[RMDB]
RNA sequence: GGGAACGACUCGAGUAGAGUCGAAAAUAGGUUGAAUUCGUUCAACCUACAGGCAAGCAAGCAGCGCAACGAGACAAGGCGAUAAUAAGAUAGCGCAUGCAGAUACAUCGGUCUUCGGACCGAUGAAAUCUCAUGUAAAGUUCGCUUUACAUGAGAUAAAAGAAACAACAACAACAAC
Reactivity to 2A3 in 0.01 (KOAc 150mM, MgCl2 10mM, bicine 150mM(pH8.5), 24C), signal-to-noise 9, nucleotides 027 to 126: u060a000g000g000u010u010g010a010a020u080u070c150g040u070u000c010a000a000c000c000u000a030c020a000g080g020c040a020a050g010c020a060a030g000c020a020g010c020g000c020a040a060c050g040a020g040a100c050a090a040g090g040c050g060a040u060a190a060u090a110a080g100a130u100a050g010c030g000c040a020u060g000c020a010g020a100u110a070c010a000u000c000g000g010u010c000u020u030c180g100g010a000c000c000g000a000u000g000a010a010
Reactivity to DMS in 0.01 (KOAc 150mM, MgCl2 10mM, bicine 150mM(pH8.5), 24C), signal-to-noise 9, nucleotides 027 to 126: u000a010g010g010u000u000g010a010a030u000u010c190g020u000u000c000a010a000c000c000u000a010c110a080g010g010c080a080a100g010c100a100a090g010c030a040g010c040g010c030a080a090c090g000a090g000a060c110a060a080g010g010c040g010a070u000a060a060u000a080a100g000a100u000a060g010c040g020c040a060u000g020c060a070g000a140u010a150c010a010u000c000g010g000u000c000u000u010c180g020g000a010c000c000g000a000u000g000a020a060